[RMDB]
RNA sequence: GGGAACGACUCGAGUAGAGUCGAAAAUGCCAAGCUGCGAUAUGCCUUGGGGAGGUGCAUGGAGCCAUUGAUCCAAGGAUUUCCGAAUGGGACUUCCUGUUUAACACUCCGAAAGGAGAGGGAACCCGUCUGAAUGAAUCUUCGGAUUCAUUCAGACAAAAGAAACAACAACAACAAC
Reactivity to DMS in 0.01 (KOAc 150mM, MgCl2 10mM, bicine 150mM(pH8.5), 24C), signal-to-noise 3, nucleotides 027 to 126: u030g010c020c000a110a120g010c080u000g010c080g020a050u040a040u020g000c010c010u040u030g010g000g000g000a170g010g030u000g000c080a090u050g000g020a170g030c050c020a240u000u020g000a240u050c030c020a020a010g020g000a050u000u010u020c000c010g000a170a080u040g010g000g000a060c110u000u000c000c000u000g000u010u010u020a120a100c170a190c030u020c010c000g000a110a110a130g000g000a010g000a050g010g000g010a050a090c010c090c040
Reactivity to 2A3 in 0.01 (KOAc 150mM, MgCl2 10mM, bicine 150mM(pH8.5), 24C), signal-to-noise 6, nucleotides 027 to 126: u130g030c000c010a040a030g090c150u130g000c050g050a050u050a050u260g080c000c010u000u000g000g020g000g000a020g000g000u040g010c090a120u210g110g060a070g010c030c000a040u060u080g010a000u000c000c000a010a010g010g010a010u000u010u000c010c010g070a130a160u170g000g010g040a040c060u030u010c010c000u010g070u030u110u070a150a050c080a020c010u000c000c000g030a030a070a030g000g010a030g000a050g010g000g010a020a030c020c020c010